[RMDB]
Source: RMDB library OK2TRN, as collected in RNAgym. The record gives the reactivity of an RNA of 177 nucleotides to DMS. For DMS, 856 sequencing reads were counted. For DMS the reverse transcriptase was MarathonRT. Values cover nucleotides 27 to 126.

RNA sequence: GGGAACGACUCGAGUAGAGUCGAAAACAGGUGCCAGUGGGUAAAAAAAGUUUGAUCACAGAAUUAUGUCAAUCACCACAUGUUUAGUCAGUUGUCUAGGCUUGGGGGGAAAACUGACGUGCAAAACCUUAAGCGUGAUGUUCGCAUCACGCUUAAGAAAAGAAACAACAACAACAAC
Reactivity to DMS in 0.01 (KOAc 150mM, MgCl2 10mM, bicine 150mM(pH8.5), 24C), signal-to-noise 1, nucleotides 027 to 126: c120a100g000g000u010g030c020c100a060g030u010g000g010g040u000a000a000a020a090a050a120a060g010u000u000u020g000a030u000c110a120c140a070g000a150a110u010u000a050u000g000u010c030a020a010u000c030a060c040c000a030c030a050u000g000u000u010u010a050g000u010c020a120g010u010u020g010u000c100u000a050g010g000c090u000u000g010g000g050g000g000g020a030a040a040a030c110u000g000a040c040g030u000g000c220a100a030a050a070c150